[RMDB]
An RNA of 177 nucleotides, treated with 2A3 and DMS and read out base by base. The reactions ran in a buffer of 150 mM KOAc, 10 mM MgCl2 and 150 mM bicine (pH 8.5), at 24 C. The DMS profile rests on 6,085 reads. Values cover nucleotides 27 to 126.
RNA sequence: GGGAACGACUCGAGUAGAGUCGAAAACGACUACGCAUAAAAUGCGGAUAUGGUGCUGACUUUGUGUAAGUCCGACGUAUCCUGUAUUCACGGAUACUGCCAGAUAUGGCUUUGGGAUUACUAUGUACGUAAUAUCGUACUUCGGUACGAUAUUACGAAAAGAAACAACAACAACAAC
Reactivity to 2A3 in 0.01 (KOAc 150mM, MgCl2 10mM, bicine 150mM(pH8.5), 24C), signal-to-noise 5, nucleotides 027 to 126: c010g050a040c030u070a010c060g000c030a020u160a100a260a060a110u100g020c010g000g000a020u050a060u210g090g040u100g060c070u050g040a100c040u070u130u200g100u060g010u040a040a070g160u010c000c010g000a010c090g010u000a000u000c000c020u030g040u120a180u110u200c060a030c060g020g000a010u000a010c000u010g000c000c000a050g050a190u250a150u150g010g000c000u090u140u050g000g000g000a000u000u000a000c020u030a030u160g060u070a030
Reactivity to DMS in 0.01 (KOAc 150mM, MgCl2 10mM, bicine 150mM(pH8.5), 24C), signal-to-noise 6, nucleotides 027 to 126: c080g010a110c090u010a080c020g020c010a040u000a070a070a090a300u000g010c010g010g010a120u000a050u000g010g010u000g010c070u000g010a130c110u000u000u000g000u010g000u000a030a040g010u000c000c010g000a120c030g000u000a010u000c000c000u010g020u010a110u000u000c170a080c200g010g000a010u000a000c010u000g010c000c000a030g000a160u010a090u000g000g000c000u000u010u000g000g010g000a020u000u000a050c030u000a070u000g000u000a120